[RMDB]
RNA sequence: GGGAACGACUCGAGUAGAGUCGAAAACUCAUCAGUAGAGACGCGCAUCUCCAUAUAGCUGGCUCGGGAUAUAUUUUCAGGACCGCACCUGGUAGUCACCCAUACAGGUAACUCUUCGUCUAAAGGAAGACGGAAAGCAGGUUUUGUCGGUAUACCCACUCUCAUAACGAUUCGUCGUUAUGAGAGUAAAAGAAACAACAACAACAAC
Reactivity to 2A3 in 0.01 (KOAc 150mM, MgCl2 10mM, bicine 150mM(pH8.5), 24C), signal-to-noise 2, nucleotides 027 to 156: c020u030c020a060u040c030a040g080u110a010g050a010g020a040c050g040c020g020c120a090u030c040u040c050c030a070u190a040u080a160g040c030u030g060g000c030u030c080g020g000g030a010u020a000u010a040u090u070u060u070c040a020g050g010a010c000c010g000c020a020c010c000u030g090g030u050a050g090u080c060a100c040c020c000a020u070a160c030a010g000g030u040a040a050c020u030c030u090u030c000g020u000c040u060a090a120a070g190g030a060a000g060a000c000g010g010a020a020a030g020c080a100g040g000u020u030u050u060g040u050c040g000g000u010a010u050a040c010c010c000
Reactivity to DMS in 0.01 (KOAc 150mM, MgCl2 10mM, bicine 150mM(pH8.5), 24C), signal-to-noise 2, nucleotides 027 to 156: c040u010c050a160u010c050a120g040u000a060g010a110g010a080c090g030c130g020c070a200u000c000u010c030c050a100u000a100u010a120g030c000u010g040g030c040u000c060g030g000g010a050u010a050u000a040u000u000u020u010c030a060g050g010a050c020c040g010c180a080c020c030u000g000g020u000a090g010u000c090a150c100c020c020a240u000a120c040a060g030g010u000a120a020c030u000c020u000u000c000g000u000c020u010a040a100a260g000g010a180a070g030a030c010g010g000a010a010a030g040c000a090g000g000u000u000u000u000g020u000c090g050g020u020a030u000a090c010c030c050

This 207-nucleotide RNA was probed chemically with 2A3 and DMS. It was measured as part of the RMDB library VIROID. For 2A3, 5,674 sequencing reads were counted.